[RMDB]
RNA sequence: GGGAACGACUCGAGUAGAGUCGAAAAGAUACGACGGCAUCGGCGGCGUCUUCUCGAACGACACCAGCUUGUAGCCGCCGCCGACGUUUACCGACGGCAGUUCGGCCGCGUUCGACACGACGCGCCACUCAGCCGGAUGAUUCGUCAUCCGGCUGAGAAAAGAAACAACAACAACAAC
Reactivity to DMS in 0.01 (KOAc 150mM, MgCl2 10mM, bicine 150mM(pH8.5), 24C), signal-to-noise 1, nucleotides 027 to 126: g020a070u010a050c080g010a050c050g020g000c030a140u000c020g000g080c000g010g030c010g000u000c010u000u010c080u010c020g020a110a030c020g010a200c110a100c260c140a080g000c030u020u050g060u000a010g000c040c010g010c000c000g030c020c000g010a000c070g030u010u000u000a190c060c010g030a090c010g000g000c100a120g010u010u000c090g000g000c040c070g000c020g000u000u000c060g000a090c220a140c170g000a020c040g000c010g000c000c000a160
Reactivity to 2A3 in 0.01 (KOAc 150mM, MgCl2 10mM, bicine 150mM(pH8.5), 24C), signal-to-noise 1, nucleotides 027 to 126: g040a040u170a150c040g030a010c000g040g020c020a050u040c090g000g000c010g040g000c000g030u030c000u020u040c040u000c000g040a080a050c080g080a070c130a070c040c000a010g060c030u110u170g070u090a010g000c000c000g030c000c010g000c040c020g020a010c000g000u000u090u080a060c000c000g010a030c030g050g030c030a030g050u120u100c040g000g000c060c030g010c020g000u020u090c070g020a120c010a010c170g050a020c000g030c020g030c020c000a000